[RMDB]
RNA sequence: GGGAACGACUCGAGUAGAGUCGAAAAGCGUAAGCAAAAAUGUGAUCUUGCUUGUAAAUACAAUUUUGAGAGGUUAAUCAAUUACAAGUAGGGCUAUUUUUGUCCCUCUCUGCAAUAGACAGCCAAACCUCAGGAGUACCUUCGGGUACUCCUGAGGAAAAGAAACAACAACAACAAC
Reactivity to 2A3 in 0.01 (KOAc 150mM, MgCl2 10mM, bicine 150mM(pH8.5), 24C), signal-to-noise 1, nucleotides 027 to 126: g090c150g050u100a070a020g030c000a000a030a000a000a030u040g190u080g140a260u000c000u000u000g000c000u000u000g080u000a010a000a000u300a040c150a080a090u170u290u080u020g110a090g000a000g000g080u100u200a150a080u150c040a020a000u000u000a000c000a030a000g000u000a000g040g000g000c000u000a000u000u020u000u050u000g020u020c000c000c000u040c000u000c030u000g030c000a050a300u050a100g120a150c030a020g140c010c080a090a080a090